Structure probing data (2A3) for a 177-nucleotide construct. Values cover nucleotides 27 to 126. The 2A3 profile rests on 562 reads. The reactions ran in a buffer of 150 mM KOAc, 10 mM MgCl2 and 150 mM bicine (pH 8.5), at 24 C. The data come from the RNA Mapping Database (RMDB), library OK1LIB.
RNA sequence: GGGAACGACUCGAGUAGAGUCGAAAACAAUACACGCCAAAGAAAGGCGAACGUCUAGCCAGCAAAAUCGACGCAAGAAAGCGUCGAAAGACGUUCACAAAAGCUGGCAAGCUCAGAAAACUGAGCAGCAUCGAAGCUGCUUCGGCAGCUUCGAUGCAAAAGAAACAACAACAACAAC
Reactivity to 2A3 in 0.01 (KOAc 150mM, MgCl2 10mM, bicine 150mM(pH8.5), 24C), signal-to-noise 2, nucleotides 027 to 126: c000a000a000u120a240c180a040c100g020c000c000a010a300a000g230a230a180a090g140g020c090g000a050a120c010g000u010c030u100a000g000c020c020a000g000c000a030a030a030a030u040c000g000a000c000g000c000a010a000g030a300a110a000g060c000g000u000c000g030a000a000a000g000a000c000g000u080u080c020a020c050a020a040a000a000g000c000u000g000g000c000a020a010g000c000u020c000a000g140a140a240a070a070c050u000g000a000g020c000a000